The record gives the reactivity of an RNA of 207 nucleotides to 2A3 and DMS. The DMS profile rests on 3,641 reads. The 2A3 profile rests on 1,025 reads. Conditions: 150 mM KOAc, 10 mM MgCl2 and 150 mM bicine (pH 8.5), 24 C. Source: RMDB library OK3TST, as collected in RNAgym.
RNA sequence: GGGAACGACUCGAGUAGAGUCGAAAACCAGGCUGCUCUCAAACUCCUGGCAAUCUGUCUGCCUUGGCUUCCCAAAGCCUUGGGAUUACAGGCGUGAGCCACUGUGCCCGGCCUAAACAUUUUUUUUGUUAAGAUAUGGGGCCUCACUUCGUCACCAUAUUUAAUGCAGUUUCGACUGCAUUAAAUAAAAAGAAACAACAACAACAAC
Reactivity to 2A3 in 0.01 (KOAc 150mM, MgCl2 10mM, bicine 150mM(pH8.5), 24C), signal-to-noise 1, nucleotides 027 to 156: c010c000a000g040g040c030u030g010c020u040c000u010c080a130a110a130c030u010c030c010u030g050g010c000a020a140u020c020u050g030u020c020u020g120c000c000u000u000g000g000c000u010u030c000c030c000a040a060a000g010c000c000u030u030g030g030g020a040u110u190a050c030a020g000g030c000g010u040g040a010g040c000c030a030c070u040g010u070g010c000c040c000g040g000c010c040u140a060a150a040c050a070u080u100u020u040u020u030u150u120g050u130u080a120a030g010a100u060a050u160g020g020g040g000c000c000u040c000a040c030u110u080c020g060u030c030a040c070c050a040
Reactivity to DMS in 0.01 (KOAc 150mM, MgCl2 10mM, bicine 150mM(pH8.5), 24C), signal-to-noise 1, nucleotides 027 to 156: c000c010a060g010g000c050u000g010c030u000c050u000c050a120a080a130c050u000c000c040u010g010g000c000a050a080u000c030u010g020u010c020u000g000c020c010u000u000g030g010c060u020u000c000c040c090a060a110a120g020c030c050u000u000g020g020g020a120u010u000a140c030a040g000g010c000g020u000g010a190g000c010c000a040c040u000g010u000g000c010c000c030g000g050c010c020u000a060a050a060c010a010u000u000u000u000u000u000u000u000g000u000u010a130a110g000a100u000a060u010g010g010g000g010c000c010u000c060a040c070u000u000c040g010u000c030a100c010c040a200